[RMDB]
RNA sequence: GGGAACGACUCGAGUAGAGUCGAAAAUGUGGCUUAAAGCUCUGAAUACUGCCUGUACCCUGCCCCUGAAUCUGACGGGCAAAAUCAGAACCGGCCCGGUAAUCACUGUUGCUGUCAGCCUGUGCCAACUAACACCAAUCUUCGGAUUGGUGUUAGUAAAAGAAACAACAACAACAAC
Reactivity to DMS in 0.01 (KOAc 150mM, MgCl2 10mM, bicine 150mM(pH8.5), 24C), signal-to-noise 3, nucleotides 027 to 126: u000g030u000g020g010c020u000u010a100a120a090g000c020u000c040u000g000a100a070u010a150c140u000g020c010c000u010g010u000a070c060c010c030u010g010c040c020c010c040u000g020a090a070u000c090u010g010a090c070g020g010g030c030a050a040a090a090u000c070a040g000a060a100c070c100g000g000c020c040c030g000g010u000a050a070u010c070a070c070u010g000u000u000g020c030u010g000u000c070a060g010c030c020u000g000u010g000c060c050a060